This 177-nucleotide RNA was probed chemically with DMS and 2A3.

RNA sequence: GGGAACGACUCGAGUAGAGUCGAAAAAGAAGGAGGUGGAUCUCCCUUUGCCAUCCGAGGGGAUUGCGUCCUCCUUACGGAUGCCCAGGUCGGACCGCGAGGAGGUGGAGAUCCCAUGCCGACCCGACCUGAGUAUUCUGUUCGCAGAAUACUCAGGAAAAGAAACAACAACAACAAC
Reactivity to DMS in 0.01 (KOAc 150mM, MgCl2 10mM, bicine 150mM(pH8.5), 24C), signal-to-noise 1, nucleotides 027 to 126: a050g010a170a190g000g000a060g000g020u000g010g020a060u000c040u000c010c030c300u030u000u000g010c040c020a060u000c000c020g000a140g030g000g000g000a030u000u000g010c040g010u020c010c020u000c010c010u010u000a060c060g020g010a120u010g000c010c000c050a110g020g000u020c060g030g010a220c050c040g010c030g000a010g020g000a020g010g000u010g030g010a040g000a050u000c010c010c040a020u010g020c030c010g000a100c020c000c030g010a180
Reactivity to 2A3 in 0.01 (KOAc 150mM, MgCl2 10mM, bicine 150mM(pH8.5), 24C), signal-to-noise 1, nucleotides 027 to 126: a020g070a050a020g030g030a010g000g030u270g060g000a010u000c040u020c000c000c000u090u120u240g020c000c000a020u000c000c000g050a200g030g130g000g000a010u000u050g040c020g010u040c000c000u000c000c000u000u000a000c000g020g020a070u200g080c020c020c010a020g000g140u080c040g000g030a040c030c000g010c000g050a020g000g040a020g010g010u090g000g030a010g000a000u020c000c020c000a000u100g020c010c010g100a140c000c000c000g020a030
The data come from the RNA Mapping Database (RMDB), library 15KREP. For 2A3, 1,435 sequencing reads were counted. 2A3 adducts were read by reverse transcription with SuperScript II with manganese. Values are in units of 0.01, from 0 to 300, in steps of 10. The DMS profile rests on 900 reads.